[RMDB]
RNA sequence: GGGAACGACUCGAGUAGAGUCGAAAAAUGCGUAGAACCCUCAGGGAGGGAGAGAGCAGGGAUAUGGGAGGACCUGGCCUUUUGUCGUGGUAGGGAAAGUGAUCUACUCAGCUUCAGCCCCAGGCUGGUCUAGUGUCCCUGAGAGGCAGGCAGGCAGUCAAUCCAUGUUAUUCGUAACAUGGAUUGAAAAAGAAACAACAACAACAAC
Reactivity to DMS in 0.01 (KOAc 150mM, MgCl2 10mM, bicine 150mM(pH8.5), 24C), signal-to-noise 2, nucleotides 027 to 156: a100u000g000c040g040u010a070g000a040a100c010c000c010u000c050a110g010g040g000a090g010g040g010a070g010a100g020a100g000c030a100g030g000g020a110u000a050u010g000g020g020a190g020g010a070c010c040u000g030g000c030c010u000u000u000u000g030u000c060g020u010g020g030u010a050g010g030g000a060a060a080g030u000g010a060u020c010u000a020c050u000c030a300g000c000u000u000c050a060g010c030c010c010c040a040g000g020c020u010g020g010u030c040u000a100g010u000g020u010c020c010c000u000g010a040g000a080g000g030c050a050g020g020c020a040g000g010c060a190g010
Reactivity to 2A3 in 0.01 (KOAc 150mM, MgCl2 10mM, bicine 150mM(pH8.5), 24C), signal-to-noise 3, nucleotides 027 to 156: a000u060g000c030g030u050a010g030a130a080c010c000c010u000c030a040g010g040g010a030g000g000g000a040g010a000g000a000g050c050a030g020g000g020a020u080a090u180g030g050g020a070g020g000a020c000c000u040g050g040c020c000u100u180u180u160g140u110c120g030u070g100g050u080a110g060g000g000a000a100a010g050u050g040a040u020c010u040a060c010u010c040a010g020c020u060u030c050a070g050c000c010c000c010a010g000g000c020u010g020g000u010c000u040a040g020u020g040u040c000c010c000u020g010a010g000a000g020g000c000a000g030g030c000a000g010g030c010a010g030